Description: This 207-nucleotide RNA was probed chemically with DMS and 2A3. For 2A3 the reverse transcriptase was SuperScript II with manganese. The DMS profile rests on 2,672 reads. The 2A3 profile rests on 1,602 reads. DMS adducts were read by reverse transcription with MarathonRT. Values cover nucleotides 27 to 156. The RNA was probed in 150 mM KOAc, 10 mM MgCl2 and 150 mM bicine (pH 8.5) at 24 C.
RNA sequence: GGGAACGACUCGAGUAGAGUCGAAAAGCGCGCUGGGUUCAACGUGAGUUUUACCUUACCUUGCUUUGUCAGAACUGGUAAACUGAUGCACACUCCGGCCAGAUCUGCCGACUUGAAGGUGGCAUGACACCUCAGCAGCGAGAUGCCACCAUCCAGCAGGCUCUCUAUUUUUCGAAAUAGAGAGCCUAAAAGAAACAACAACAACAAC
Reactivity to DMS in 0.01 (KOAc 150mM, MgCl2 10mM, bicine 150mM(pH8.5), 24C), signal-to-noise 1, nucleotides 027 to 156: g010c040g000c100g000c000u000g030g020g050u010u000c020a120a030c040g040u000g000a140g020u000u010u000u000a060c010c010u000u010a100c060c060u010u000g050c020u010u010u000g010u000c020a070g000a100a130c060u020g010g010u000a010a050a060c030u000g010a120u000g020c100a080c160a080c040u000c000c020g000g000c010c020a060g000a060u000c060u000g030c030c020g000a150c050u000u000g010a100a090g010g070u000g010g000c030a110u010g020a100c000a020c000c000u000c110a130g020c170a090g010c030g000a170g010a050u010g020c000c030a030c000c020a020u000c020c030a140g000c170
Reactivity to 2A3 in 0.01 (KOAc 150mM, MgCl2 10mM, bicine 150mM(pH8.5), 24C), signal-to-noise 3, nucleotides 027 to 156: g040c040g000c000g010c050u020g000g050g000u170u110c050a040a010c070g000u050g040a040g030u050u030u110u160a020c010c000u000u060a060c000c000u050u070g010c030u110u090u180g070u140c000a020g000a060a030c040u040g000g030u030a110a020a110c020u060g040a070u110g060c120a030c000a020c150u000c000c000g000g000c030c020a020g010a090u040c010u050g010c000c030g070a140c020u040u070g030a100a050g000g000u000g000g020c000a010u050g060a100c020a060c080c040u080c030a110g000c020a010g040c040g020a060g010a030u020g010c000c000a000c000c000a010u000c010c000a010g140c040